Structure probing data (DMS and 2A3) for a 207-nucleotide construct. The DMS profile rests on 5,912 reads. For DMS the reverse transcriptase was MarathonRT. Values cover nucleotides 27 to 156. The RNA was probed in 150 mM KOAc, 10 mM MgCl2 and 150 mM bicine (pH 8.5) at 24 C.
RNA sequence: GGGAACGACUCGAGUAGAGUCGAAAAUACUUAGUACGCGCGUAGUUGCAGGCAUUCCGGGUGCAGCAACUGACGCGGAAGACUUUUGCCAGAGUGUGCGCUUCAACUGGCGUGCUGAGUAGUGCACGAAUUGCACGUACGUUCGCGUACGUGCAAACCAUGCUAGUUAUUUCGAUAACUAGCAUGGAAAAGAAACAACAACAACAAC
Reactivity to DMS in 0.01 (KOAc 150mM, MgCl2 10mM, bicine 150mM(pH8.5), 24C), signal-to-noise 2, nucleotides 027 to 156: u000a070c070u000u000a060g020u000a080c020g000c010g040c040g030u010a050g060u000u010g020c000a180g020g000c010a050u000u020c030c300g040g010g090u000g020c030a300g020c010a030a030c010u000g020a000c000g020c020g000g020a070a110g000a090c070u000u000u000u000g030c030c040a140g000a150g020u000g020u010g000c030g020c000u010u040c050a090a110c110u000g000g000c060g020u000g000c020u000g000a090g040u010a070g020u000g010c020a090c020g000a090a160u000u010g010c000a000c010g000u000a000c010g040u000u000c300g020c030g020u000a010c000g000u000g000c000a000a000a070
Reactivity to 2A3 in 0.01 (KOAc 150mM, MgCl2 10mM, bicine 150mM(pH8.5), 24C), signal-to-noise 6, nucleotides 027 to 156: u050a000c010u020u030a000g010u010a010c020g010c000g000c010g080u030a010g010u010u000g010c040a100g100g000c010a020u080u110c090c180g180g050g020u040g010c010a010g000c020a020a020c010u090g170a040c010g000c010g020g010a010a010g090a050c030u080u120u110u120g060c040c000a030g020a040g080u090g020u030g040c060g020c040u020u060c040a200a170c050u040g020g010c000g010u000g010c000u000g000a010g010u050a020g010u030g080c040a010c090g050a100a100u030u010g000c000a000c000g010u010a000c000g010u010u040c200g000c000g060u000a000c010g000u010g000c000a000a000a000